[RMDB]
RNA sequence: GGGAACGACUCGAGUAGAGUCGAAAAGACGGGUCCCGGCCCGAUGGGGCCGUCACGAAUGAUGCUGUCCAAACCUGUGAUCGCCGCCGUCAGCGGCUACGCCGUCGCCGGGGGGCUGGAAUUGGCACCAAAGUCUAGUGUUCGCACUAGACUUUGGAAAAGAAACAACAACAACAAC
Reactivity to DMS in 0.01 (KOAc 150mM, MgCl2 10mM, bicine 150mM(pH8.5), 24C), signal-to-noise 1, nucleotides 027 to 126: g010a100c060g000g020g020u000c010c020c010g050g020c000c030c140g010a070u010g020g000g030g040c000c050g040u010c050a070c100g010a100a130u010g000a080u000g020c030u000g030u010c070c020a050a140a110c070c050u010g040u000g010a060u000c230g020c020c030g020c010c080g020u020c080a220g010c100g000g000c010u000a000c180g010c000c020g020u000c020g010c050c040g040g010g020g010g000g000c080u000g000g030a060a100u010u000g000g050c070a300
An RNA of 177 nucleotides, treated with DMS and read out base by base. The RNA was probed in 150 mM KOAc, 10 mM MgCl2 and 150 mM bicine (pH 8.5) at 24 C. It was measured as part of the RMDB library OK2TST.